[RMDB]
The data come from the RNA Mapping Database (RMDB), library M2RFPK. An RNA of 207 nucleotides, treated with 2A3 and DMS and read out base by base. For 2A3, 5,096 sequencing reads were counted. 2A3 adducts were read by reverse transcription with SuperScript II with manganese.

RNA sequence: GGGAACGACUCGAGUAGAGUCGAAAAGGAGCGACAAGUAUUUAGCUUGAGAUAGCUAACUCACCUCGGUAUGAUUAGGGUGAGACCUAGGAACCGUAGGGGUAUUCUCAAAGGAAGCUUUUGCAGUGAAGGAAGAUACGAUUCGUCGUAUCUUCAACACAUUAGCUUUGUUCGCAAAGCUAAUGUGAAAAGAAACAACAACAACAAC
Reactivity to 2A3 in 0.01 (KOAc 150mM, MgCl2 10mM, bicine 150mM(pH8.5), 24C), signal-to-noise 6, nucleotides 027 to 156: g060g010a040g030c040g100a080c060a100a020g030u060a190u080u100u040a010g020c000u020u020g020a040g010a080u080a020g000c020u010a040a020c000u010c020a030c010c010u120c070g060g020u280a170u210g100a140u100u150a040g000g040g000u020g060a030g010a010c000c010u030a020g040g020a020a030c030c010g020u070a040g000g020g000g000u030a080u110u050c050u010c000a040a070a000g070g010a050a010g030c000u020u060u120u170g030c080a040g010u050g140a090a030g100g000a000a010g000a000u000a000c000g000a020u010u090c160g050u000c010g000u080a000u000c000u000u010c000a000a000
Reactivity to DMS in 0.01 (KOAc 150mM, MgCl2 10mM, bicine 150mM(pH8.5), 24C), signal-to-noise 3, nucleotides 027 to 156: g010g000a010g020c010g020a120c040a030a100g020u000a100u000u000u000a070g010c010u000u000g030a210g020a140u010a060g020c020u000a040a070c090u000c010a060c000c010u000c050g020g010u010a110u010g000a230u020u000a050g000g020g030u020g010a140g010a060c050c030u010a090g000g010a140a030c030c010g000u010a080g000g020g000g020u000a060u000u000c030u000c030a070a100a160g020g020a080a120g010c040u010u000u000u000g010c040a090g020u010g000a110a170g000g000a030a010g010a020u000a010c000g000a070u000u000c300g010u010c000g030u000a010u000c000u000u010c010a030a170
Description:
The DMS profile rests on 7,093 reads. The reactions ran in a buffer of 150 mM KOAc, 10 mM MgCl2 and 150 mM bicine (pH 8.5), at 24 C. Values cover nucleotides 27 to 156.